RNA sequence: GGGAACGACUCGAGUAGAGUCGAAAAGAACGCCCGGUCUGUCGGUGAAAAGCGAUGCGAGACCGGCGCGAAACGCUCUCAGUAAUCCUCCGCACUCCGGUCCGCUUAGCACGGAGUCCGAGAGUGGUACUACAAAAGACUUCGGUCUUUUGUAGUAAAAAGAAACAACAACAACAAC
Reactivity to DMS in 0.01 (KOAc 150mM, MgCl2 10mM, bicine 150mM(pH8.5), 24C), signal-to-noise 7, nucleotides 027 to 126: g010a140a150c030g010c030c010c000g020g000u000c000u000g010u010c010g000g000u020g010a080a090a140a190g010c020g020a030u010g010c240g000a050g010a020c010c000g000g000c140g020c010g010a040a090a120c110g000c060u010c020u000c020a120g000u010a090a090u020c020c020u000c070c050g010c070a030c010u000c020c010g000g000u020c040c040g010c060u010u040a150g010c180a220c000g000g000a040g000u010c030c000g000a090g000a010g020u000g000g000
Reactivity to 2A3 in 0.01 (KOAc 150mM, MgCl2 10mM, bicine 150mM(pH8.5), 24C), signal-to-noise 9, nucleotides 027 to 126: g040a090a010c010g000c000c010c000g000g000u010c010u050g220u050c020g130g070u140g130a140a100a050a030g140c020g030a020u120g100c070g030a050g010a020c000c000g000g010c090g000c000g040a030a020a000c080g030c010u020c000u000c040a030g050u140a060a110u040c000c020u040c030c030g050c030a010c010u000c000c000g030g020u020c020c000g020c080u120u180a020g020c060a010c040g010g000a010g110u030c010c010g150a180g000a000g040u020g010g020